This 177-nucleotide RNA was probed chemically with 2A3. For 2A3 the reverse transcriptase was SuperScript II with manganese. Conditions: 150 mM KOAc, 10 mM MgCl2 and 150 mM bicine (pH 8.5), 24 C.
RNA sequence: GGGAACGACUCGAGUAGAGUCGAAAAGGAGUCAAAGCUUUGUGCUUGUCUGGCGCUCGGAUUCUGUCUCCUUCGGCUCUCCAGAGUCGGAGCUCUCCAGGGAGCGCUUUGUUGUUCGAUGCCGGCUCCCUUAGAAGAAGUUCGCUUCUUCUAAGGGAAAAGAAACAACAACAACAAC
Reactivity to 2A3 in 0.01 (KOAc 150mM, MgCl2 10mM, bicine 150mM(pH8.5), 24C), signal-to-noise 2, nucleotides 027 to 126: g000g000a010g000u040c030a010a000a010g020c020u090u130u090g070u030g020c020u100u060g140u210c160u100g060g000c030g000c040u050c020g000g010a030u100u050c050u220g020u010c010u000c000c000u000u020c010g000g000c000u000c000u010c040c060a020g000a000g000u000c000g000g000a000g040c000u010c000u000c040c020a120g040g020g030a010g000c020g000c090u050u010u030g000u000u030g030u000u050c080g060a140u100g070c010c030g030g020c000u000